[RMDB]
RNA sequence: GGGAACGACUCGAGUAGAGUCGAAAAAUUUGCUGCUCUAGUCUGUCAGUGAUAGGAGCGGUUAUACGCAUGGGAUAAAACAAUAUUGGGCCACUGUACAUGGAGAUGAAAUGUGUUUUGUCUCUCGACCCUUUUCUAUGUUCGCAUAGAAAAGGGUAAAAGAAACAACAACAACAAC
Reactivity to DMS in 0.01 (KOAc 150mM, MgCl2 10mM, bicine 150mM(pH8.5), 24C), signal-to-noise 4, nucleotides 027 to 126: a080u000u010u000g000c010u000g010c010u000c000u000a300g010u000c000u000g010u010c200a100g000u010g000a040u000a300g010g000a010g020c000g000g000u010u010a040u000a110c120g010c200a040u000g020g000g010a040u000a030a020a040a040c040a030a070u000a120u000u010g000g000g010c020c020a030c080u000g020u020a100c210a140u000g010g010a050g010a100u010g010a050a060a060u000g010u000g020u000u000u000u000g010u000c000u000c000u000c130g000
Reactivity to 2A3 in 0.01 (KOAc 150mM, MgCl2 10mM, bicine 150mM(pH8.5), 24C), signal-to-noise 3, nucleotides 027 to 126: a000u080u080u120g020c010u000g000c010u000c010u010a070g010u040c000u030g300u200c100a110g090u050g120a020u050a080g010g020a010g010c040g000g000u120u060a110u020a060c070g050c050a050u140g000g030g000a010u030a040a030a010a030c020a030a070u050a080u110u090g060g060g000c020c010a020c070u110g060u140a060c030a100u070g000g020a080g010a040u150g070a040a050a020u140g040u000g010u010u000u010u020g000u010c000u000c010u000c050g050